An RNA of 207 nucleotides, treated with 2A3 and DMS and read out base by base. Conditions: 150 mM KOAc, 10 mM MgCl2 and 150 mM bicine (pH 8.5), 24 C. 2A3 adducts were read by reverse transcription with SuperScript II with manganese. For 2A3, 1,298 sequencing reads were counted. It was measured as part of the RMDB library OK3TST. High 2A3 reactivity points to a flexible backbone, as in loops and unpaired stretches.
RNA sequence: GGGAACGACUCGAGUAGAGUCGAAAAUGGCCUGGCAUGGAAGUGGUGUAGGACAUGCUGAUUAAGACAAACACAAUUGGCUGGGCAUGGUGGCUCACACCUGUAAUCCCAGCACUUUGGGAGGCUGACGCAGGUGGAUUGCUUGAGUGCAGGAGUACUGGGUUUUAUCAUUCGUGAUAAAACCCAGAAAAGAAACAACAACAACAAC
Reactivity to 2A3 in 0.01 (KOAc 150mM, MgCl2 10mM, bicine 150mM(pH8.5), 24C), signal-to-noise 2, nucleotides 027 to 156: u090g080g020c010c010u000g020g000c000a040u050g050g050a100a010g060u090g010g050u050g010u100a040g020g040a010c020a070u080g010c030u040g040a150u170u150a110a020g090a050c040a010a190a020c040a020c030a110a120u110u100g030g040c010u020g000g040g000c040a010u090g010g020u030g000g050c030u020c090a070c010a010c010c000u000g040u090a050a040u030c020c000c000a010g070c020a040c040u060u090u010g010g000g000a050g030g010c040u040g020a030c090g000c030a010g000g010u030g030g020a140u070u170g020c040u020u050g010a040g060u050g000c030a020g010g070a030g030u140a000
Reactivity to DMS in 0.01 (KOAc 150mM, MgCl2 10mM, bicine 150mM(pH8.5), 24C), signal-to-noise 1, nucleotides 027 to 156: u010g000g040c000c010u000g030g000c020a060u000g010g020a260a080g000u010g000g030u000g000u000a110g000g030a120c040a080u000g030c020u000g010a100u000u000a140a120g020a120c050a100a050a190c110a080c100a050a160u040u000g040g050c020u000g030g010g000c040a030u010g000g010u010g010g030c070u000c150a150c010a020c000c010u040g000u000a060a170u000c000c010c000a040g000c040a020c060u000u000u000g010g050g000a070g030g010c030u000g040a050c210g010c000a060g010g070u000g020g030a090u000u010g000c040u000u020g060a070g050u010g000c060a050g010g000a100g030u020a260